[RMDB]
Structure probing data (DMS and 2A3) for a 177-nucleotide construct.
The DMS profile rests on 1,446 reads.
Reactivities are given for positions 27 through 126.
RNA sequence: GGGAACGACUCGAGUAGAGUCGAAAAGAAAAUAAGCGAAGAUAGCUCAGUCGGUAGAGCAGCAGGAGCGAAACCUGCAUCGAAAGGGAUCAAGACCCUGUUCGCGCAAAAACCGAAGUUAAAAAAACAUACAAUCUAGCUUCGGCUAGAUUGUAUGAAAAGAAACAACAACAACAAC
Reactivity to DMS in 0.01 (KOAc 150mM, MgCl2 10mM, bicine 150mM(pH8.5), 24C), signal-to-noise 2, nucleotides 027 to 126: g000a100a100a120a090u040a080a090g000c070g010a080a100g000a140u000a050g030c020u000c040a070g010u000c000g000g010u000a040g000a090g010c000a170g010c000a000g020g010a060g000c180g010a080a140a030c010c000u000g000c000a080u010c050g020a010a090a010g000g010g000a070u010c290a060a150g020a120c020c000c000u000g020u000u000c000g020c200g010c130a020a040a070a100a010c010c000g030a000a110g000u020u000a000a000a020a080a050a080a100
Reactivity to 2A3 in 0.01 (KOAc 150mM, MgCl2 10mM, bicine 150mM(pH8.5), 24C), signal-to-noise 2, nucleotides 027 to 126: g060a010a170a020a060u160a070a000g040c050g120a100a010g080a260u150a050g030c020u000c010a000g050u010c000g000g020u010a010g000a020g030c010a000g000c000a000g010g020a040g010c020g000a070a020a000c010c010u000g000c000a010u030c000g010a030a000a020g000g000g010a030u120c060a140a030g120a200c000c000c000u050g240u020u010c020g010c000g020c010a010a050a000a050a000c000c000g000a010a030g130u100u110a060a050a050a010a010a000a010